Conditions: 150 mM KOAc, 10 mM MgCl2 and 150 mM bicine (pH 8.5), 24 C. The record gives the reactivity of an RNA of 207 nucleotides to 2A3. It was measured as part of the RMDB library OK3TST.
RNA sequence: GGGAACGACUCGAGUAGAGUCGAAAAGGAGGCCAUGGUGACUGCGAGGGUGGAGGCCAUGGUGAUUGUGAAGGUGGAGGCUAUGGUGAGUUGGGUGGAGGCCCUGCCCUGGUGAGUUGAAUAGAGGCCAUAGUGAGUGUGGUUGGAGGCCACGGUAGCUAGUCACUAAUUUCGAUUAGUGACUAGCAAAAGAAACAACAACAACAAC
Reactivity to 2A3 in 0.01 (KOAc 150mM, MgCl2 10mM, bicine 150mM(pH8.5), 24C), signal-to-noise 2, nucleotides 027 to 156: g040g010a030g010g000c020c000a010u020g030g010u070g060a110c050u060g070c030g070a080g040g010g030u040g060g100a190g040g000c040c040a000u000g000g100u090g090a300u110u140g030u070g060a050a040g070g020u120g010g030a050g010g000c050u040a080u100g020g000u080g000a080g000u130u110g020g010g000u060g000g030a020g010g000c000c000c000u000g040c010c010c060u070g060g040u050g090a050g000u030u040g010a030a020u050a060g060a090g030g050c010c000a020u010a030g060u120g070a060g020u050g050u020g040g030u010u060g060g010a030g000g070c020c000a020c040g030g000u010a030